[RMDB]
RNA sequence: GGGAACGACUCGAGUAGAGUCGAAAACACGCGAUAGAUCGCGGGAUCGAAACGGGCCGCCAGUGGUUGGUCAUCGGAUAUCGAUGUAAGGACGAGUCGACCCCCGGGCCGCAGGGCUCGAGCGAUGUACUGAAUUGCUGUUCGCAGCAAUUCAGUAAAAAGAAACAACAACAACAAC
Reactivity to 2A3 in 0.01 (KOAc 150mM, MgCl2 10mM, bicine 150mM(pH8.5), 24C), signal-to-noise 6, nucleotides 027 to 126: c150a010c010g040c000g030a090u110a210g170a210u190c010g000c010g020g000g030a050u050c030g030a040a040a050c060g010g000g020c010c010g030c050c020a130g130u210g110g060u210u300g060g000u050c060a120u070c060g060g030a070u040a070u180c000g000a000u040g060u180a030a090g070g030a010c000g000a000g000u000c000g020a080c010c000c000c000c000g000g010g020c030c010g040c120a110g050g050g030c000u010c000g030a030g000c080g080a100u160g040
Reactivity to DMS in 0.01 (KOAc 150mM, MgCl2 10mM, bicine 150mM(pH8.5), 24C), signal-to-noise 3, nucleotides 027 to 126: c080a110c000g000c010g010a130u000a100g010a050u010c000g000c010g020g000g020a040u000c060g010a010a150a080c110g000g030g000c010c020g030c050c000a130g030u070g020g030u020u010g050g040u010c010a060u000c020g000g010a150u020a140u000c040g000a030u010g010u050a150a190g020g010a250c010g030a020g010u020c000g000a170c060c000c020c050c010g000g000g000c000c010g000c300a100g000g000g030c030u000c000g000a060g010c110g000a140u030g000
Background: Structure probing data (2A3 and DMS) for a 177-nucleotide construct. The reactions ran in a buffer of 150 mM KOAc, 10 mM MgCl2 and 150 mM bicine (pH 8.5), at 24 C. The 2A3 profile rests on 3,546 reads. For DMS the reverse transcriptase was MarathonRT. It was measured as part of the RMDB library OK1LIB.